[RMDB]
RNA sequence: GGGAACGACUCGAGUAGAGUCGAAAAAUCCGUGGAUAUCGGGUGCGCACCGCUCCUCCUCCGGCUGUUCUCCUUCACAGCUAUGACCCAUGCGCCGCACAGGCAGUGUCCCGCUUCGUUUGCAAAAAAAACCGCCAGUACUUCGGUACUGGCGGAAGAAGACUAUGUAGUUCGCUACAUAGUCUUCAAAAGAAACAACAACAACAAC
Reactivity to 2A3 in 0.01 (KOAc 150mM, MgCl2 10mM, bicine 150mM(pH8.5), 24C), signal-to-noise 1, nucleotides 027 to 156: a000u030c010c000g000u070g020g020a090u050a080u260c030g000g000g020u110g020c040g000c020a040c030c010g020c000u000c000c020u030c000c000u030c000c030g040g000c020u020g040u070u070c050u010c040c000u090u100c110a060c000a040g000c000u070a130u170g050a050c000c020c030a060u090g030c030g010c040c000g060c000a060c010a080g020g000c010a000g000u020g000u020c000c010c000g010c000u060u050c070g040u070u140u220g020c060a050a050a000a000a000a000a040a110c000c000g000c000c000a000g000u000a010c000u040u130c260g050g000u000a000c000u010g040g020c000g010g000a000a000
Reactivity to DMS in 0.01 (KOAc 150mM, MgCl2 10mM, bicine 150mM(pH8.5), 24C), signal-to-noise 1, nucleotides 027 to 156: a070u010c050c030g000u000g050g000a050u010a050u010c030g030g000g050u000g000c010g000c050a130c060c020g050c030u030c040c010u000c080c020u000c000c070g000g040c050u030g030u010u000c060u000c090c040u000u000c060a080c060a090g000c060u000a110u010g010a170c030c010c030a060u000g020c090g030c020c030g000c060a060c060a140g010g020c050a120g010u000g000u000c010c010c050g030c040u000u000c110g010u000u000u000g020c000a030a000a000a080a150a070a080a240c020c020g000c000c000a010g010u000a030c000u000u000c210g070g050u010a000c000u000g000g060c000g040g000a000a010